[RMDB]
RNA sequence: GGGAACGACUCGAGUAGAGUCGAAAACGAUGUCCCGACCGGAGGCCGACAAUCCAGGGAACCGGAUGUCAUCACGUUGUUGCAGUACCAGAUGGCAUCUUAAAUCCGAUCUGCAAAUAAGCAUGUAAAAACCGGCAUACGUUCGCGUAUGCCGGAACUAAGGUUGCAACUUCGGUUGCAACCUUAGAAAAGAAACAACAACAACAAC
Reactivity to DMS in 0.01 (KOAc 150mM, MgCl2 10mM, bicine 150mM(pH8.5), 24C), signal-to-noise 2, nucleotides 027 to 156: c040g050a120u000g000u000c020c010c000g000a080c060c020g010g000a060g030g050c030c020g000a150c030a080a120u000c110c080a090g020g050g000a090a160c030c080g000g020a010u000g010u020c000a030u030c020a180c170g020u000u010g020u000u000g010c010a120g040u010a080c000c030a120g000a030u000g000g000c030a040u020c020u000u000a010a050a220u000c040c030g020a050u000c080u000g000c010a070a010a170u000a030a070g020c020a200u000g030u040a050a120a090a100a030c030c000g000g000c010a010u000a010c000g030u000u010c280g040c030g090u000a000u000g000c000c010g100g000a000a000
Source: RMDB library M2RFPK, as collected in RNAgym.
An RNA of 207 nucleotides, treated with DMS and read out base by base.
DMS adducts were read by reverse transcription with MarathonRT.
The DMS profile rests on 2,833 reads.